[RMDB]
RNA sequence: GGGAACGACUCGAGUAGAGUCGAAAAAAGAAGCGUGUCGAGGAGCUACUCAAGAAGCUGGAUAUUCAACUGGUGCCCAGCCCGAGCAUCAAAAAAAUCGAAGCACAGUCGCAGGAAAACUCCCUGAGCGUAAAUUACUAUUCGUAGUAAUUUACGCAAAAGAAACAACAACAACAAC
Reactivity to DMS in 0.01 (KOAc 150mM, MgCl2 10mM, bicine 150mM(pH8.5), 24C), signal-to-noise 4, nucleotides 027 to 126: a040a070g000a140a080g000c090g010u010g010u000c050g020a080g020g000a100g020c020u000a070c030u010c050a090a110g010a070a060g010c030u010g010g000a080u010a060u010u010c090a090a100c210u000g010g010u000g010c040c020c040a110g010c040c050c060g010a100g000c040a010u000c010a000a000a030a050a030a090a060u010c090g000a070a060g020c050a060c120a040g000u010c040g020c040a050g010g010a050a040a050a090c170u010c000c000c000u000g000a210
Reactivity to 2A3 in 0.01 (KOAc 150mM, MgCl2 10mM, bicine 150mM(pH8.5), 24C), signal-to-noise 2, nucleotides 027 to 126: a020a040g090a080a020g050c050g020u040g020u100c030g000a040g020g020a030g010c020u060a060c000u030c080a050a050g100a070a010g100c030u010g010g010a040u060a120u130u150c080a130a040c070u060g000g000u010g020c000c000c050a020g010c040c030c010g010a010g030c010a000u000c000a060a120a030a000a010a020a050u060c060g020a060a020g000c000a010c020a070g030u080c030g000c020a000g040g090a050a070a010a040c020u010c030c000c000u000g020a000